[RMDB]
RNA sequence: GGGAACGACUCGAGUAGAGUCGAAAAGACACAGAAUGUUACUGUUAAACCUAAGAGGUUACGCAAAAAGCGUAAUGUUGACCCUUUGUCCAAUUUUGAACAUAAGGUUAUUACAGAGUGCGUUACCGAAUGUACCACUGUUCGCAGUGGUACAUUCAAAAGAAACAACAACAACAAC
Reactivity to DMS in 0.01 (KOAc 150mM, MgCl2 10mM, bicine 150mM(pH8.5), 24C), signal-to-noise 3, nucleotides 027 to 126: g000a210c210a050c020a020g010a090a160u020g030u020u010a070c010u000g010u010u000a070a090a100c030c010u010a080a070g000a190g010g010u050u010a010c020g000c000a010a080a070a130a120g000c070g010u000a010a010u000g010u010u010g020a040c070c010c010u000u000u000g000u000c010c010a050a250u000u000u010u000g010a000a010c010a020u000a050a020g000g000u000u010a040u000u010a010c010a110g010a110g000u000g010c010g010u000u000a040c020c020
Reactivity to 2A3 in 0.01 (KOAc 150mM, MgCl2 10mM, bicine 150mM(pH8.5), 24C), signal-to-noise 4, nucleotides 027 to 126: g020a010c020a000c010a040g100a150a170u170g060u180u160a090c000u010g010u030u050a070a090a060c010c000u050a130a020g140a050g150g000u010u000a010c000g020c020a020a050a060a130a020g100c040g010u010a020a000u040g030u050u130g060a030c020c000c000u000u010u010g030u000c040c020a090a100u130u090u090u210g030a040a000c000a000u120a060a020g040g000u030u050a030u040u010a030c030a030g060a030g160u040g040c000g010u010u060a020c010c020